[RMDB]
RNA sequence: GGGAACGACUCGAGUAGAGUCGAAAACAAUGAGGAUACCUGUUGGGUUAAGCGGACAUCUUGCAAGCCAAGUGGUGGUACUACUCCUGAAUGGAGAGAGUUUGCAACACCAGCAUAGGCAUGAAUGAUCUUCAGUAGCGUUCGCGCUACUGAAGAUAAAAGAAACAACAACAACAAC
Reactivity to 2A3 in 0.01 (KOAc 150mM, MgCl2 10mM, bicine 150mM(pH8.5), 24C), signal-to-noise 2, nucleotides 027 to 126: c010a000a070u170g030a030g180g000a000u080a090c000c020u110g040u050u190g030g070g000u060u160a140a000g030c100g020g060a000c000a090u030c010u100u040g000c020a110a110g050c000c050a100a160g040u040g060g020u000g000g000u060a040c010u040a000c000u010c000c000u170g060a080a090u250g020g020a020g000a000g000a000g030u030u250u290g020c150a090a000c000a020c010c000a040g060c150a040u170a020g000g000c020a010u080g130a050a090u130g020
Reactivity to DMS in 0.01 (KOAc 150mM, MgCl2 10mM, bicine 150mM(pH8.5), 24C), signal-to-noise 2, nucleotides 027 to 126: c110a100a130u050g010a080g030g010a050u000a070c040c020u000g000u000u000g030g000g000u000u030a150a150g010c080g030g020a070c100a010u030c020u020u000g000c130a050a130g050c000c020a080a060g080u000g000g000u000g000g010u040a030c060u010a030c000u000c000c020u000g000a130a120u050g000g000a000g000a090g020a080g030u000u000u060g020c100a120a050c050a070c030c020a030g000c020a070u000a140g020g030c090a200u050g000a130a020u070g000

This 177-nucleotide RNA was probed chemically with 2A3 and DMS. The reactions ran in a buffer of 150 mM KOAc, 10 mM MgCl2 and 150 mM bicine (pH 8.5), at 24 C. For 2A3, 517 sequencing reads were counted. The data come from the RNA Mapping Database (RMDB), library OK1LIB.